Structure probing data (DMS) for a 177-nucleotide construct. The RNA was probed in 150 mM KOAc, 10 mM MgCl2 and 150 mM bicine (pH 8.5) at 24 C. For DMS, 2,224 sequencing reads were counted. Source: RMDB library M2PK50, as collected in RNAgym.

[RMDB]
RNA sequence: GGGAACGACUCGAGUAGAGUCGAAAAACAGGUCGAUUCGUCGACCUGUACAUUGCGGCCGCGCCGGGUCGUUCCCGCGCGAAACCCGGCCCGGCCGCGCGCUUACAAACGGAUUCGUCCGUUUGAACAUACACAGCCUGUUCGCAGGCUGUGUAUGAAAAGAAACAACAACAACAAC
Reactivity to DMS in 0.01 (KOAc 150mM, MgCl2 10mM, bicine 150mM(pH8.5), 24C), signal-to-noise 2, nucleotides 027 to 126: a040c010a020g010g010u000c000g020a020u010u000c190g030u000c000g010a000c010c000u010g000u000a010c160a090u010u000g020c010g010g000c010c010g040c300g000c010c010g010g000g000u000c060g010u000u000c020c010c050g010c130g000c100g000a020a090a060c020c040c010g000g000c000c100c000g040g020c010c000g000c000g010c140g010c130u000u000a190c030a000a010a000c010g000g010a020u000u000c240g000u000c010c000g000u000u000u000g000a110a200